An RNA of 177 nucleotides, treated with DMS and 2A3 and read out base by base.
DMS adducts were read by reverse transcription with MarathonRT.
Values are in units of 0.01, from 0 to 300, in steps of 10.
The RNA was probed in 150 mM KOAc, 10 mM MgCl2 and 150 mM bicine (pH 8.5) at 24 C.
DMS (dimethyl sulfate) methylates the pairing face of unpaired adenines and cytosines.
RNA sequence: GGGAACGACUCGAGUAGAGUCGAAAAGCACGGACUAAGCCAGGCGAGCCGCGUCGCGCCGAUCACGAGCAGGAUGGGUCGGUACCGAAUUUCGAUAUCGCUCGCCUCGACGGCCGACGCACCGCGAAUAUCCCACGUGAUUCGUCACGUGGGAUAUAAAAGAAACAACAACAACAAC
Reactivity to DMS in 0.01 (KOAc 150mM, MgCl2 10mM, bicine 150mM(pH8.5), 24C), signal-to-noise 3, nucleotides 027 to 126: g000c050a110c040g000g010a090c070u020a120a130g000c060c040a100g010g000c040g000a300g020c100c180g000c040g010u000c020g000c280g020c000c000g010a070u000c060a120c140g000a120g030c180a090g000g030a060u010g000g000g020u010c020g030g000u000a020c030c000g020a110a250u010u000u020c010g020a020u000a010u010c000g020c000u010c000g000c030c000u010c030g000a090c020g000g000c000c000g000a020c020g030c000a130c040c030g010c030g000a130
Reactivity to 2A3 in 0.01 (KOAc 150mM, MgCl2 10mM, bicine 150mM(pH8.5), 24C), signal-to-noise 3, nucleotides 027 to 126: g030c040a020c100g040g090a030c070u110a100a030g070c030c040a060g100g000c010g000a050g080c060c140g000c050g000u000c010g000c040g000c030c000g090a200u050c070a040c180g090a070g010c090a040g100g100a130u150g020g040g020u300c090g000g020u010a000c020c010g040a120a190u080u300u190c010g000a010u020a000u030c010g000c000u000c010g040c010c000u000c000g000a000c000g000g000c000c000g000a000c000g010c000a010c000c000g000c010g000a030
2A3 adducts were read by reverse transcription with SuperScript II with manganese.